[RMDB]
RNA sequence: GGGAACGACUCGAGUAGAGUCGAAAAGACAUAAUAGGAAGCAAAUGCUUGGUUGUAACGAUCGAGAUAGAAUCUGUUGAUUUAAGCUGAAAGGCUGCAGACUUAUUAAAUGGGUGUUCUGCUGUAUGGCGUUCGCGCCUAAGCAGCAGAAUGCGUGCUGAUCAUGAAAGUUCGCUUUCAUGAUCAGAAAAGAAACAACAACAACAAC
Reactivity to 2A3 in 0.01 (KOAc 150mM, MgCl2 10mM, bicine 150mM(pH8.5), 24C), signal-to-noise 6, nucleotides 027 to 156: g020a010c020a020u180a050a070u080a210g040g030a040a010g020c050a060a090a050u240g030c050u050u040g030g020u050u040g040u070a090a070c070g030a060u050c030g010a010g020a100u070a050g050a030a050u000c040u020g050u020u030g080a150u080u060u120a030a020g000c000u030g050a050a030a020g050g000c010u010g000c010a010g020a060c020u070u080a040u060u130a180a130a080u130g100g050g000u020g010u010u000c000u000g010c010u000g010u020a050u130g000g000c000g010u030u060c210g000c000g010c050c010u020a090a050g000c000a000g000c000a000g010a000a000u000g000c010g000u040g010
Reactivity to DMS in 0.01 (KOAc 150mM, MgCl2 10mM, bicine 150mM(pH8.5), 24C), signal-to-noise 3, nucleotides 027 to 156: g010a170c040a060u000a080a140u010a070g000g020a060a070g000c000a110a120a090u000g000c020u000u000g000g010u000u000g000u010a080a150c110g010a080u000c060g030a080g010a110u010a090g010a050a120u000c020u010g000u000u000g020a140u010u000u000a060a050g030c010u010g020a140a100a150g000g000c000u000g000c040a080g000a120c040u000u000a070u000u010a050a080a100u000g010g010g020u000g030u000u000c010u000g000c000u010g000u000a300u010g010g020c000g020u010u000c290g040c070g030c010c000u010a030a120g000c000a020g000c010a000g020a010a010u000g000c030g020u010g010
An RNA of 207 nucleotides, treated with 2A3 and DMS and read out base by base. For DMS the reverse transcriptase was MarathonRT. The DMS profile rests on 4,456 reads. 2A3 adducts were read by reverse transcription with SuperScript II with manganese.